[RMDB]
RNA sequence: GGGAACGACUCGAGUAGAGUCGAAAACAGUCUGCCGCCAUCGUUGAAUACCAGAUAAACGCCACGCUUUACCUUUACCCUGGUCCCGAAAGCGAACCCAUCCGCGCUGCUGCCGUGAAAAAACUGGAAGCGUACAUCACAGCACAGCACCGGCUGGCCUGAGAACAAUAUUCGUAUUGUUCUCAGGAAAAGAAACAACAACAACAAC
Reactivity to 2A3 in 0.01 (KOAc 150mM, MgCl2 10mM, bicine 150mM(pH8.5), 24C), signal-to-noise 3, nucleotides 027 to 156: c010a020g050u040c030u060g030c020c010g010c000c000a080u060c060g090u080u100g110a060a060u150a160c030c030a040g020a100u110a070a160a010c040g010c020c020a040c030g020c020u060u030u120a110c010c020u040u100u120a130c030c000c020u050g010g030u040c060c010c020g080a050a060a010g050c040g020a040a040c010c000c000a010u000c010c010g010c010g000c030u000g000c050u020g000c010c000g020u010g030a080a090a050a020a000a060c060u070g100g050a100a030g130c040g040u040a040c020a090u000c020a000c010a000g020c010a000c010a020g000c000a020c060c030g000g000c010u000g000g030
Reactivity to DMS in 0.01 (KOAc 150mM, MgCl2 10mM, bicine 150mM(pH8.5), 24C), signal-to-noise 1, nucleotides 027 to 156: c060a080g000u000c050u020g020c000c000g020c020c090a150u000c060g000u000u000g040a100a110u000a130c040c060a170g020a130u000a110a050a050c030g000c040c000a060c020g000c030u030u010u000a050c020c020u000u010u010a090c020c010c050u000g040g020u000c020c010c020g020a090a020a140g020c000g000a020a110c020c000c010a120u010c000c020g030c020g050c000u000g000c050u000g050c000c000g000u000g020a010a040a110a040a080a040c050u020g020g010a110a080g040c000g040u010a040c110a210u050c030a100c000a010g010c010a060c040a060g000c000a050c050c070g030g010c070u000g000g030
Background: Source: RMDB library OK3TST, as collected in RNAgym. The record gives the reactivity of an RNA of 207 nucleotides to 2A3 and DMS. The DMS profile rests on 2,255 reads. 2A3 adducts were read by reverse transcription with SuperScript II with manganese.